This 177-nucleotide RNA was probed chemically with DMS and 2A3. Conditions: 150 mM KOAc, 10 mM MgCl2 and 150 mM bicine (pH 8.5), 24 C. The DMS profile rests on 1,457 reads. Values cover nucleotides 27 to 126. It was measured as part of the RMDB library M2PK90.

[RMDB]
RNA sequence: GGGAACGACUCGAGUAGAGUCGAAAAGACAAAUGCAGCAUAUUAGGCUAAGCAGGAAAGGGUCGGUAGCUCCUGGUGUCAGUUCAUACGGUGUGAUGCAUCUGCGUCGUGCACACAUGCACCCAAAGUAAUAGCGAGCAUUCGUGCUCGCUAUUACAAAAGAAACAACAACAACAAC
Reactivity to DMS in 0.01 (KOAc 150mM, MgCl2 10mM, bicine 150mM(pH8.5), 24C), signal-to-noise 2, nucleotides 027 to 126: g030a060c060a030a060a080u000g000c030a050g000c040a040u020a140u000u010a100g030g010c040u000a080a120g030c050a050g010g010a040a080a120g030g010g020u010c010g020g010u000a070g010c060u010c030c000u000g000g000u000g010u000c060a070g000u010u010c060a090u000a140c140g000g030u000g040u000g010a110u000g010c000a060u000c060u020g000c050g000u000c100g040u020g000c040a040c040a010c110a060u000g000c070a150c010c010c060a040a020a090
Reactivity to 2A3 in 0.01 (KOAc 150mM, MgCl2 10mM, bicine 150mM(pH8.5), 24C), signal-to-noise 1, nucleotides 027 to 126: g050a010c030a010a100a000u060g000c020a020g010c020a010u110a120u290u170a100g020g070c020u050a090a040g010c000a020g000g080a110a050a000g080g000g010u020c030g000g050u000a020g000c000u000c030c030u030g000g040u020g010u060c030a090g060u000u090c030a010u080a110c060g060g010u030g010u000g020a150u020g010c010a030u050c050u090g040c050g100u110c030g020u040g000c010a000c010a010c020a020u020g000c010a070c030c020c010a050a090a000